The data come from the RNA Mapping Database (RMDB), library RNAMAK. Structure probing data (2A3 and DMS) for a 207-nucleotide construct. The 2A3 profile rests on 1,722 reads. For 2A3 the reverse transcriptase was SuperScript II with manganese. Conditions: 150 mM KOAc, 10 mM MgCl2 and 150 mM bicine (pH 8.5), 24 C. For DMS, 3,434 sequencing reads were counted.
RNA sequence: GGGAACGACUCGAGUAGAGUCGAAAACAUGGAUACGUUCGCGUAUCCAUGAAAAAACCGUAGGUCCAGACCCGGUGCCUGAUCAAUUCGAAAGAGUUGCGUAGGCAAGCCGCUGGACCUAAACGGAAAAACCUGUAUAGUUUCGACUAUACAGGAAUCGAAAAGUAUACUUCGGUAUACUUUUCGAAAAAGAAACAACAACAACAAC
Reactivity to 2A3 in 0.01 (KOAc 150mM, MgCl2 10mM, bicine 150mM(pH8.5), 24C), signal-to-noise 2, nucleotides 027 to 156: c000a000u000g010g000a010u000a000c010g030u040u030c220g000c000g090u000a000u010c000c010a000u010g010a000a000a000a010a010a000c010c010g000u010a000g000g010u000c010c000a000g010a120c150c140c070g010g050u020g010c010c000u010g000a020u110c000a000a010u000u000c010g040a120a100a060g010a050g010u000u020g020c070g020u050a000g010g010c030a020a030g090c010c000g000c010u000g000g030a000c000c000u000a000a020a000c010g020g130a060a080a280a010a020c010c000u030g000u000a000u010a000g030u040u030u150c180g040a020c010u000a000u000a000c000a010g020g040a010a050
Reactivity to DMS in 0.01 (KOAc 150mM, MgCl2 10mM, bicine 150mM(pH8.5), 24C), signal-to-noise 2, nucleotides 027 to 156: c010a010u000g000g020a000u000a000c030g050u000u030c300g070c010g050u010a010u000c000c000a000u000g000a000a100a050a130a070a040c000c020g060u010a010g000g000u000c000c010a040g010a060c220c000c030g020g010u000g010c020c010u000g020a110u000c020a010a010u010u000c040g010a200a180a230g000a050g020u000u000g000c070g010u000a050g020g010c040a050a230g010c000c000g020c000u000g010g010a040c010c000u000a000a030a060c000g010g020a010a080a060a120a170c010c010u010g000u010a010u000a010g010u000u010u010c280g020a080c010u000a020u030a010c020a030g030g010a020a010